[RMDB]
RNA sequence: GGGAACGACUCGAGUAGAGUCGAAAAUGUUCCAGCCUAUUACUUAUUUCCAAUUGACUACCUCAUUGGUCUUGGGUAUAGGUUUGUGUGCGUUCCUGACUUUGCUCUUCUAUUAUAUUAAUAAAGUUAAGUAGAUACUUCGGUAUCUACAAAAGAAACAACAACAACAAC
Reactivity to DMS in 0.01 (KOAc 150mM, MgCl2 10mM, bicine 150mM(pH8.5), 24C), signal-to-noise 2, nucleotides 027 to 129: u080g020u000u000c060c000a150g000c010c080u000a030u090u060a020c000u020u050a030u000u000u000c020c010a000a000u090u020g020a000c140u040a180c100c200u010c040a030u090u020g040g050u030c000u010u010g000g000g000u040a020u010a010g050g110u020u050u030g050u020g020u000g020c010g000u040u020c050c010u050g000a050c000u000u000u040g020c050u010c020u080u050c080u000a190u160u100a220u000a160u000u180a100a090u000a100a060a220g020u090u080a020a040
Reactivity to 2A3 in 0.01 (KOAc 150mM, MgCl2 10mM, bicine 150mM(pH8.5), 24C), signal-to-noise 3, nucleotides 027 to 129: u140g010u020u000c010c010a010g010c000c000u030a030u110u170a030c000u040u030a000u030u020u000c000c000a020a050u110u140g020a040c070u100a140c090c090u030c010a020u000u000g000g010u000c010u010u010g020g000g000u010a010u000a000g000g000u000u260u070g080u060g010u000g040c010g020u020u000c010c040u020g010a050c000u030u040u040g030c010u000c000u090u090c040u060a200u300u040a200u150a070u300u140a200a130u190a190a140a010g050u090u060a140a000